[RMDB]
Chemical mapping of a 177-nucleotide RNA with DMS and 2A3. The data come from the RNA Mapping Database (RMDB), library OK1LIB. Conditions: 150 mM KOAc, 10 mM MgCl2 and 150 mM bicine (pH 8.5), 24 C. For DMS, 1,959 sequencing reads were counted. Values cover nucleotides 27 to 126.

RNA sequence: GGGAACGACUCGAGUAGAGUCGAAAAGAACGCCAAGAGGCGAGACCGAGACCGAGAAUCACGCUACCUCGGAAAAGUGGAAUAGCGUCAGGAGUCCACUUUCGGAAAAGCCGAAAGAACGGCAGAAGAGUAAUCCGAGUUUCGACUCGGAUUACUCAAAAGAAACAACAACAACAAC
Reactivity to DMS in 0.01 (KOAc 150mM, MgCl2 10mM, bicine 150mM(pH8.5), 24C), signal-to-noise 2, nucleotides 027 to 126: g080a110a050c030g000c000c020a080a130g000a240g040g000c010g030a090g000a300c010c050g070a050g020a260c030c020g010a030g020a200a060u030c040a120c040g000c060u010a140c140c000u000c000g000g000a100a050a060a040g030u010g000g040a090a050u000a030g020c010g000u010c190a080g000g010a130g000u010c000c020a020c000u000u060u050c040g010g020a120a090a070a210g000c010c000g000a080a000a040g010a110a060c150g000g020c060a090g000a170a100
Reactivity to 2A3 in 0.01 (KOAc 150mM, MgCl2 10mM, bicine 150mM(pH8.5), 24C), signal-to-noise 2, nucleotides 027 to 126: g090a040a010c060g010c020c020a120a090g050a160g140g000c010g000a010g040a010c000c010g010a040g030a030c020c040g000a000g000a040a050u090c060a010c000g050c000u030a040c000c000u020c020g040g000a130a040a000a000g110u150g020g020a130a130u060a220g020c000g030u050c060a060g020g140a030g020u050c000c000a010c000u000u000u010c010g000g060a100a030a000a000g120c000c000g000a010a000a000g070a030a030c000g010g000c000a000g180a120a020